[RMDB]
RNA sequence: GGGAACGACUCGAGUAGAGUCGAAAAUUACCUCCCUUCGGGGAGGUAAACUGAACGCUGCAAGCGGCAGCGCGCUCGCUUGCGCACACACGCACAUUAAAAGCAGUAUGCACUUCGGUGCAUACAAAUCUAACAUGUGGUUCGCCACAUGUUAGAUAAAAGAAACAACAACAACAAC
Reactivity to 2A3 in 0.01 (KOAc 150mM, MgCl2 10mM, bicine 150mM(pH8.5), 24C), signal-to-noise 4, nucleotides 027 to 126: u040u010a000c000c000u000c010c000c000u010u030c220g040g000g000g000a010g000g010u010a010a000a000c000u020g080a060a010c070g010c100u170g020c030a000a030g020c000g050g000c020a060g300c070g020c060g020c090u120c040g000c000u000u010g000c000g000c000a010c000a000c000a010c050g110c020a050c020a160u150u300a070a110a070a000g020c040a020g010u000a000u000g000c010a000c000u040u090c230g100g000u010g000c000a000u010a000c000a000a010
Reactivity to DMS in 0.01 (KOAc 150mM, MgCl2 10mM, bicine 150mM(pH8.5), 24C), signal-to-noise 5, nucleotides 027 to 126: u000u000a010c000c000u000c000c000c000u010u000c190g030g000g020g010a020g010g000u000a010a010a070c090u000g010a140a120c160g010c040u010g020c010a030a020g010c020g010g000c020a130g010c200g000c190g010c020u000c050g010c010u000u000g010c000g010c030a060c150a090c110a070c130g000c050a070c140a110u000u000a040a070a110a110g000c100a120g000u000a000u000g000c000a020c000u000u010c140g020g000u000g000c000a000u000a000c000a030a080